Structure probing data (2A3 and DMS) for a 177-nucleotide construct. The reactions ran in a buffer of 150 mM KOAc, 10 mM MgCl2 and 150 mM bicine (pH 8.5), at 24 C. Values are in units of 0.01, from 0 to 300, in steps of 10. DMS adducts were read by reverse transcription with MarathonRT. 2A3 adducts were read by reverse transcription with SuperScript II with manganese.
RNA sequence: GGGAACGACUCGAGUAGAGUCGAAAACUGAAGACAUCUCACAGCUUUUGAUCGAGAUUAAGCGACUGUAUGCUUUACAAGAAGAUUCUGAAGUGGAGCCGAUAGCCAUAAUUUGUGAUGGCAUAGAUGUAUGCUUCUACUUCGGUAGAAGCAUACAAAAAGAAACAACAACAACAAC
Reactivity to 2A3 in 0.01 (KOAc 150mM, MgCl2 10mM, bicine 150mM(pH8.5), 24C), signal-to-noise 2, nucleotides 027 to 126: c000u020g060a060a010g000a040c040a040u060c010u030c020a030c010a070g090c050u110u190u160u130g070a060u110c060g040a000g050a240u040u150a070a000g060c030g110a090c050u060g040u180a040u130g000c010u060u050u040a060c010a100a100g100a020a020g040a130u090u000c000u040g020a050a050g000u000g000g020a030g050c040c030g030a040u030a040g000c010c010a060u060a150a150u160u190u300g100u150g120a030u040g010g000c040a010u070a010g120a020
Reactivity to DMS in 0.01 (KOAc 150mM, MgCl2 10mM, bicine 150mM(pH8.5), 24C), signal-to-noise 2, nucleotides 027 to 126: c030u000g000a230a070g000a100c140a030u000c020u000c010a100c110a190g000c130u020u000u010u010g010a110u000c110g010a080g000a100u000u000a040a120g010c070g030a080c200u020g020u000a040u000g030c060u000u000u010a080c090a100a100g010a090a050g000a100u010u000c030u000g000a020a070g010u000g000g000a090g050c020c030g000a110u020a090g020c000c000a020u010a050a110u020u020u000g020u000g000a040u000g010g020c020a120u000a040g010a080